[RMDB]
RNA sequence: GGGAACGACUCGAGUAGAGUCGAAAACGAAAGUGUAUGCAGAGCUAUUCUGGAAGGGCCUCCUCUCGUACAUGGACUGGAUGCUUGCAGAUACACAGUUAUGGCUGAAUGCAGAGCCCAGGCUCGACGGUGUUAUACGGUUCGCCGUAUAACACCGAAAAGAAACAACAACAACAAC
Reactivity to 2A3 in 0.01 (KOAc 150mM, MgCl2 10mM, bicine 150mM(pH8.5), 24C), signal-to-noise 2, nucleotides 027 to 126: c060g080a110a050a090g060u100g010u080a040u100g050c040a020g000a020g080c040u060a060u150u040c070u110g030g040a050a020g120g000g040c040c000u010c000c000u020c020u000c000g040u120a130c020a160u190g100g020a020c020u010g000g030a020u070g030c040u030u060g000c050a010g010a130u130a110c090a000c020a120g030u160u080a100u170g120g000c020u000g080a120a070u060g060c010a000g030a030g040c040c000c000a040g000g010c000u030c030g060a050
Reactivity to DMS in 0.01 (KOAc 150mM, MgCl2 10mM, bicine 150mM(pH8.5), 24C), signal-to-noise 3, nucleotides 027 to 126: c070g000a100a110a140g020u000g020u000a040u010g010c030a030g010a070g000c050u000a070u000u000c040u040g010g000a110a180g000g000g000c010c070u000c050c010u010c070u000c020g020u010a070c180a080u010g000g000a040c040u000g000g000a070u000g020c030u000u000g030c070a030g020a160u010a110c120a070c070a050g000u000u010a020u000g000g020c030u010g000a110a100u000g000c050a040g000a140g010c000c020c030a080g000g010c090u000c080g000a270